An RNA of 177 nucleotides, treated with 2A3 and DMS and read out base by base. 2A3 adducts were read by reverse transcription with SuperScript II with manganese. Source: RMDB library OK2TRN, as collected in RNAgym. The reactions ran in a buffer of 150 mM KOAc, 10 mM MgCl2 and 150 mM bicine (pH 8.5), at 24 C. DMS (dimethyl sulfate) methylates the pairing face of unpaired adenines and cytosines.

[RMDB]
RNA sequence: GGGAACGACUCGAGUAGAGUCGAAAAACGUGCAACGGUGGCGCACCGGUCCGGGACGACGACCUAUCCGAUCAUCGAUAGCGCAACCGGGCUGGCCUGGAUCGCCCAACAGGCGGCGCUGGAGGUGCGAUAAAUGCGGAUUCGUCCGCAUUUAUCGAAAAGAAACAACAACAACAAC
Reactivity to 2A3 in 0.01 (KOAc 150mM, MgCl2 10mM, bicine 150mM(pH8.5), 24C), signal-to-noise 3, nucleotides 027 to 126: a000c070g030u070g030c020a080a060c070g070g060u080g050g000c040g010c020a030c020c020g000g000u000c020c000g000g010g040a120c140g030a030c020g040a080c040c000u010a020u020c090c060g120a120u220c080a050u160c090g010a020u030a010g040c030g000c020a030a030c000c000g020g030g000c010u010g030g030c000c020u030g020g030a090u130c070g040c010c020c000a040a050c000a020g000g030c010g070g000c030g000c010u030g030g070a080g020g080u120g040
Reactivity to DMS in 0.01 (KOAc 150mM, MgCl2 10mM, bicine 150mM(pH8.5), 24C), signal-to-noise 6, nucleotides 027 to 126: a130c090g020u000g010c060a060a090c070g000g040u010g020g010c050g010c060a210c270c020g010g010u000c020c010g010g000g010a170c100g000a150c070g000a100c200c020u000a030u000c050c070g020a160u010c190a110u010c140g000a090u000a030g000c000g000c030a120a140c010c000g010g000g000c000u000g010g010c080c020u000g000g000a110u000c130g010c030c010c020a150a090c030a050g010g000c070g010g020c020g000c020u000g000g000a160g000g010u010g010